[RMDB]
Chemical mapping of a 207-nucleotide RNA with 2A3 and DMS. Values cover nucleotides 27 to 156. For DMS the reverse transcriptase was MarathonRT. The reactions ran in a buffer of 150 mM KOAc, 10 mM MgCl2 and 150 mM bicine (pH 8.5), at 24 C. The data come from the RNA Mapping Database (RMDB), library M2RFPK. 2A3 adducts were read by reverse transcription with SuperScript II with manganese.

RNA sequence: GGGAACGACUCGAGUAGAGUCGAAAAGGACUGCGCAGUCCGGCAACAUCAGCAGAGAGCCCGCUAUACGUGACGGAUUGGCUGAAGCGUACAGAAAUAUUGAGCCUCCUGCAAGAGCCAGCCAAGCAAAACGUACGUGAGUUCGCUCACGUACGAAGGCUUAUUUCAACUUCGGUUGAAAUAAGCCAAAAGAAACAACAACAACAAC
Reactivity to 2A3 in 0.01 (KOAc 150mM, MgCl2 10mM, bicine 150mM(pH8.5), 24C), signal-to-noise 3, nucleotides 027 to 156: g010g000a000c040u060g030c140g020c090a020g040u000c000c000g030g000c010a080a050c020a100u130c020a020g000c030a010g150a000g000a030g080c020c030c060g010c040u060a060u020a080c060g020u050g060a010c040g000g070a120u100u110g110g030c010u020g040a080a010g010c010g000u020a020c020a040g150a120a120a030u230a080u150u150g030a040g010c000c030u020c000c020u020g010c030a020a050g010a000g080c000c010a010g000c010c000a010a000g030c020a040a060a020a050c010g000u000a010c020g000u000g000a000g000u000u100c140g050c090u000c000a000c000g010u000a000c000g000a010a000
Reactivity to DMS in 0.01 (KOAc 150mM, MgCl2 10mM, bicine 150mM(pH8.5), 24C), signal-to-noise 1, nucleotides 027 to 156: g000g030a090c010u010g000c070g010c090a100g040u000c020c020g010g060c020a050a140c070a110u000c050a040g010c000a120g010a110g010a110g010c020c000c000g080c020u000a120u000a020c050g000u000g010a300c040g020g020a180u000u000g020g000c020u010g000a100a300g020c010g020u000a130c000a040g000a070a050a200u030a180u000u000g000a090g000c020c060u020c000c020u010g000c020a010a120g000a210g010c030c040a080g020c010c000a050a080g010c070a030a060a090a250c000g020u000a000c000g040u000g000a080g030u020u000c300g020c000u000c010a000c010g000u010a000c010g040a010a060